This 207-nucleotide RNA was probed chemically with 2A3 and DMS. The RNA was probed in 150 mM KOAc, 10 mM MgCl2 and 150 mM bicine (pH 8.5) at 24 C.
[RMDB]
RNA sequence: GGGAACGACUCGAGUAGAGUCGAAAAUCCCAAAGGUUGCCGAAUCCGAAAGGUCAGGAGGAACCGCUUUUUGGGGUUAAUCUGCAGUGAAGCUGCAGUAGGGAUACCUUCUGUCCCGCACCCGACAGCUAACUCCCCAGGCAAUAAAGGAAGGAGAAUAUUAGUAGGAUUUCGAUCCUACUAAUAUAAAAGAAACAACAACAACAAC
Reactivity to 2A3 in 0.01 (KOAc 150mM, MgCl2 10mM, bicine 150mM(pH8.5), 24C), signal-to-noise 3, nucleotides 027 to 156: u010c000c000c010a070a040a010g090g000u040u020g030c020c010g050a080a100u080c030c010g060a120a030a010g000g000u040c050a020g020g020a020g010g010a090a060c050c030g010c020u150u130u010u060u190g040g000g000g010u030u020a060a030u060c000u010g000c010a030g010u060g240a170a020g150c000u000g000c000a010g010u010a040g000g010g000a010u100a130c020c000u020u050c010u030g000u000c010c000c000g000c010a030c000c000c010g010a060c050a040g000c000u020a030a040c010u020c000c000c030c020a010g000g020c000a000a030u100a160a050a000g020g010a010a000g010g020a040g060a080
Reactivity to DMS in 0.01 (KOAc 150mM, MgCl2 10mM, bicine 150mM(pH8.5), 24C), signal-to-noise 4, nucleotides 027 to 156: u020c000c000c020a080a120a150g000g020u000u010g000c010c020g020a200a300u000c030c020g010a140a150a130g030g010u010c030a090g000g010a110g000g010a100a120c090c070g000c080u000u000u000u000u050g040g030g000g010u010u000a080a120u010c010u000g010c010a030g020u010g020a130a180g030c010u000g020c000a030g020u000a040g000g010g010a060u000a060c030c050u010u000c060u010g030u000c080c010c000g000c120a110c010c010c010g010a080c140a050g010c040u000a140a180c030u000c020c000c020c040a170g020g020c040a100a060u000a060a060a100g010g010a100a070g020g020a280g000a170